Structure probing data (DMS and 2A3) for a 170-nucleotide construct. The reactions ran in a buffer of 150 mM KOAc, 10 mM MgCl2 and 150 mM bicine (pH 8.5), at 24 C. Reactivities are given for positions 27 through 129. It was measured as part of the RMDB library 15KLIB.
[RMDB]
RNA sequence: GGGAACGACUCGAGUAGAGUCGAAAAUCGUUAAGACUGACGGUACACUCAUGGUAGAGCGGUUUGUGUCUUUGGCUAUAGAUGCUUACCCUCUCACAAAGCAUGAAGAUAUAGAAUACCAGAAUGUAAGCGGCCUGAUUCGUCAGGCCGAAAAGAAACAACAACAACAAC
Reactivity to DMS in 0.01 (KOAc 150mM, MgCl2 10mM, bicine 150mM(pH8.5), 24C), signal-to-noise 4, nucleotides 027 to 129: u030c070g040u030u060a060a170g030a120c040u010g010a130c100g000g060u030a030c110a180c000u010c020a100u020g000g000u070a020g010a030g000c260g090g010u000u000u000g000u010g040u000c020u010u010u050g050g030c130u080a050u040a050g060a040u010g020c030u020u030a030c050c040c000u030c000u000c050a160c230a060a090a110g000c000a050u030g010a090a080g030a160u000a150u070a120g020a060a150u000a040c020c050a100g030a100a020u000g010u020a060a020g040
Reactivity to 2A3 in 0.01 (KOAc 150mM, MgCl2 10mM, bicine 150mM(pH8.5), 24C), signal-to-noise 4, nucleotides 027 to 129: u060c000g010u040u100a070a020g070a060c030u040g030a040c050g040g000u000a010c000a010c060u010c000a000u020g050g020u110a000g000a000g010c060g000g030u010u020u020g010u000g010u000c000u090u050u070g100g000c040u030a020u060a170g000a000u000g010c000u000u000a010c000c000c000u030c000u020c000a030c000a030a140a010g080c010a000u020g040a070a020g030a020u100a000u030a210g150a090a000u030a040c000c000a010g080a060a010u080g000u070a130a050g100